About this RNA: Structure probing data (2A3) for a 177-nucleotide construct. 2A3 is a SHAPE reagent: it acylates the 2'-hydroxyl of flexible nucleotides of all four kinds. It was measured as part of the RMDB library OK1LIB. Conditions: 150 mM KOAc, 10 mM MgCl2 and 150 mM bicine (pH 8.5), 24 C.
[RMDB]
RNA sequence: GGGAACGACUCGAGUAGAGUCGAAAACCGCACACAAAACAGCAGAACAAAGCGUGCCAAAACAAAAUCUGCUGAAAACAAAAGGCAUGCGUGUGCGAAAAACAAAACACAAACAAAACAAAACAAACAUGUACCCGCAGUUCGCUGCGGGUACAUGAAAAGAAACAACAACAACAAC
Reactivity to 2A3 in 0.01 (KOAc 150mM, MgCl2 10mM, bicine 150mM(pH8.5), 24C), signal-to-noise 2, nucleotides 027 to 126: c000c010g000c000a000c000a000c000a000a210a190a000c000a030g010c000a000g020a070a130c020a200a170a000g020c040g000u020g040c000c010a030a120a110a090c040a080a300a100a000u000c000u040g000c020u000g020a020a140a000a000c170a000a020a030a000g000g000c000a000u010g000c020g000u000g000u000g020c000g160a150a040a000a000a000c070a000a000a040a020c080a010c110a050a240a000c050a080a090a050a030c070a000a120a050a000c070a000a000a070